[RMDB]
RNA sequence: GGGAACGACUCGAGUAGAGUCGAAAAGGUGACUACGAUACAGGGACAGAACACUCCCAUAUUCGUCCCGUAUGCCGUCCUAGUGUCUCAAGGUACCACGUCCACUAGUAGUACCACGCCUAGUGUAGGAGUAGGUCAUAUUCGUAUGACCUACUCCAAAAGAAACAACAACAACAAC
Reactivity to 2A3 in 0.01 (KOAc 150mM, MgCl2 10mM, bicine 150mM(pH8.5), 24C), signal-to-noise 3, nucleotides 027 to 126: g030g010u030g040a050c040u050a020c130g020a020u030a070c130a120g000g010g010a010c060a160g100a160a010c040a040c100u030c010c020c020a030u080a040u080u040c010g000u000c000c000c010g000u010a030u070g100c070c020g030u010c000c010u000a020g040u030g050u110c030u030c060a030a070g010g010u020a040c010c020a030c040g050u060c070c020a040c060u040a020g010u000a000g000u010a050c030c010a000c030g060c000c010u090a080g030u050g090u140a060
Reactivity to DMS in 0.01 (KOAc 150mM, MgCl2 10mM, bicine 150mM(pH8.5), 24C), signal-to-noise 4, nucleotides 027 to 126: g010g020u010g020a100c040u000a040c100g000a050u000a030c060a140g020g010g000a040c010a090g010a030a050c140a070c120u010c030c030c000a140u000a110u000u010c040g000u000c000c000c020g020u000a040u000g030c080c030g000u000c030c030u010a030g020u000g000u000c030u000c090a080a110g000g010u010a040c030c020a030c070g000u000c090c050a060c090u010a060g010u010a050g020u000a090c030c020a130c110g000c040c020u010a040g010u000g010u010a160